This 177-nucleotide RNA was probed chemically with DMS and 2A3. For DMS the reverse transcriptase was MarathonRT. The reactions ran in a buffer of 150 mM KOAc, 10 mM MgCl2 and 150 mM bicine (pH 8.5), at 24 C. It was measured as part of the RMDB library OK2TST.
RNA sequence: GGGAACGACUCGAGUAGAGUCGAAAAACAUCCACCUUCCGGUGGCAUCGCAUGGGCGGCGUGGGCGCGCAGCCCUCGGCCCGUUACGGACACGCAUGUGUGGCAGCCGCUGGGCGCGUGAUCAUGCCCGCUUCGUCAGGUUCGCCUGACGAAGCGGAAAAGAAACAACAACAACAAC
Reactivity to DMS in 0.01 (KOAc 150mM, MgCl2 10mM, bicine 150mM(pH8.5), 24C), signal-to-noise 2, nucleotides 027 to 126: a120c170a120u010c030c010a060c060c000u000u010c300c120g030g000u000g000g000c230a060u010c060g010c070a110u000g000g000g020c040g000g010c030g030u000g000g000g000c010g020c000g000c000a110g050c010c000c000u000c010g000g000c000c030c150g000u000u000a050c080g000g000a130c060a030c040g000c180a100u000g020u000g000u000g000g000c140a180g010c020c000g020c180u000g000g030g020c040g000c030g020u000g000a040u010c030a060u010g020c070
Reactivity to 2A3 in 0.01 (KOAc 150mM, MgCl2 10mM, bicine 150mM(pH8.5), 24C), signal-to-noise 1, nucleotides 027 to 126: a000c030a060u090c000c000a010c010c000u230u230c150c090g040g060u000g030g000c030a080u130c060g100c090a170u180g070g000g070c010g000g000c010g010u060g000g050g000c020g000c000g040c020a080g000c000c000c000u000c000g000g000c000c000c030g010u020u050a030c030g030g080a000c030a020c060g200c130a230u270g110u050g000u020g160g000c020a000g000c000c030g000c180u000g000g030g010c020g020c000g020u030g030a050u040c010a000u060g020c040